About this RNA
This 177-nucleotide RNA was probed chemically with 2A3 and DMS. Values cover nucleotides 27 to 126.
[RMDB]
RNA sequence: GGGAACGACUCGAGUAGAGUCGAAAACAGUGCCUGGCCACCCCGAGGCGUUGCACCUGGAGUGCCAGUCGAACACCAGCCUGCUGCUGCGCUGGCAGCCCCCACUCAGCCACAACGGCGUGCUCACGCAGAUACCUUUAUUCGUAAAGGUAUCUGCAAAAGAAACAACAACAACAAC
Reactivity to 2A3 in 0.01 (KOAc 150mM, MgCl2 10mM, bicine 150mM(pH8.5), 24C), signal-to-noise 6, nucleotides 027 to 126: c020a020g040u030g080c000c010u020g030g020c080c020a040c010c010c010c040g100a040g020g020c130g100u170u200g030c120a080c060c020u040g040g020a050g030u040g010c020c000a010g040u090c060g060a090a020c040a050c060c030a020g070c020c040u080g000c020u020g000c020u020g000c050g010c050u030g040g000c000a020g000c020c000c000c000c000a030c010u080c040a030g020c010c010a090c040a270a100c090g020g000c010g010u020g030c010u040c030a050c090
Reactivity to DMS in 0.01 (KOAc 150mM, MgCl2 10mM, bicine 150mM(pH8.5), 24C), signal-to-noise 6, nucleotides 027 to 126: c120a080g020u010g010c050c010u000g000g010c100c060a060c030c020c010c010g010a040g020g010c030g020u000u010g010c080a080c030c000u010g000g010a060g020u000g000c010c020a010g010u010c050g000a120a090c090a090c050c060a080g000c050c040u000g010c040u000g020c030u000g000c100g010c040u000g010g000c010a030g010c020c020c000c010c020a110c110u000c060a100g010c020c020a090c130a070a100c130g000g010c030g010u000g000c060u000c080a120c210